[RMDB]
RNA sequence: GGGAACGACUCGAGUAGAGUCGAAAAAUGCAUGGAUUGGAAUCGUGUAGUCGACAGAAGAAUAUGAUGAUUAGAUGGAGAGUAUAUUUUAUCUAACUCUUUGAGUUGGUCACCGAUUCUAGGACUAGCUCGAGAAUGAAUAAGUACUAAGGGAUGAUCGUAGUACAUCCUUCGGGAUGUACUACGAAAAAGAAACAACAACAACAAC
Reactivity to DMS in 0.01 (KOAc 150mM, MgCl2 10mM, bicine 150mM(pH8.5), 24C), signal-to-noise 2, nucleotides 027 to 156: a090u010g020c010a070u000g040g000a160u010u020g020g010a080a180u000c040g000u000g020u000a070g020u000c000g010a060c040a240g020a060a050g030a080a090u010a100u000g010a110u000g010a090u010u010a010g020a100u000g040g010a120g000a100g060u010a080u000a090u000u000u000u000a070u010c030u000a070a030c030u000c010u000u000u000g010a040g050u000u010g010g010u000c010a040c020c010g000a110u000u010c070u000a080g000g000a090c010u000a130g020c020u010c040g000a030g030a040a050u000g000a040a050u000a010a090g000u000a050c030u000a050a050g030g010g010a070u000g010a100
Reactivity to 2A3 in 0.01 (KOAc 150mM, MgCl2 10mM, bicine 150mM(pH8.5), 24C), signal-to-noise 3, nucleotides 027 to 156: a010u110g020c040a020u050g050g040a100u100u140g030g030a070a020u060c060g000u030g000u160a040g020u050c020g010a010c040a030g120a080a010g030a040a030u140a040u200g060a020u000g010a020u030u170a080g030a080u050g060g000a030g000a000g100u020a080u010a020u160u120u030u030a030u020c020u010a010a030c010u030c010u050u080u160g020a060g020u000u010g030g000u080c050a040c150c020g040a050u060u070c020u090a030g000g000a000c010u000a010g010c000u000c010g010a020g020a020a040u060g020a010a010u080a160a010g040u050a040c040u030a000a030g030g000g030a040u080g020a010